RNA sequence: GGGAACGACUCGAGUAGAGUCGAAAAGAGGAGUCAUUCGUGACUCCUCAAAGGGAGCUCAACUCUCCCGCUCAAGUCCGAGAGCCUUCGGACCCAUAAGAAUGCUGUUCCUGUUCGCAGGAACAAAAGGCUAGUUGACAUUCGUGUCAACUAGCCUAAAAGAAACAACAACAACAAC
Reactivity to 2A3 in 0.01 (KOAc 150mM, MgCl2 10mM, bicine 150mM(pH8.5), 24C), signal-to-noise 1, nucleotides 027 to 126: g000a000g000g010a010g020u000c010a020u090u080c100g080u040g010a000c000u000c000c000u000c010a000a010a010g010g020g010a010g010c010u030c140a010a050c000u000c020u020c000c030c000g000c000u090c070a070a000g000u010c000c000g010a010g010a030g270c000c070u030u020c010g020g010a020c080c030c000a110u150a090a060g140a130a140u300g030c040u030g050u060u000c000c000u000g000u050u060c230g000c050a020g000g000a000a000c000a000a030a000
Reactivity to DMS in 0.01 (KOAc 150mM, MgCl2 10mM, bicine 150mM(pH8.5), 24C), signal-to-noise 1, nucleotides 027 to 126: g000a000g010g000a030g020u000c000a040u000u040c220g060u000g010a010c010u000c020c000u000c000a000a020a170g000g020g000a030g000c200u000c270a150a150c300u000c000u000c000c000c000g010c040u000c070a030a200g000u000c000c010g000a010g010a050g000c040c140u000u010c000g020g000a010c080c050c120a020u020a080a080g000a130a110u000g000c090u000g000u000u010c020c000u000g000u020u010c220g030c020a020g130g000a000a030c000a020a020a020
Structure probing data (2A3 and DMS) for a 177-nucleotide construct. 2A3 adducts were read by reverse transcription with SuperScript II with manganese. As a SHAPE reagent, 2A3 marks flexible, mostly unpaired nucleotides at the ribose 2'-OH. Conditions: 150 mM KOAc, 10 mM MgCl2 and 150 mM bicine (pH 8.5), 24 C. For DMS, 544 sequencing reads were counted.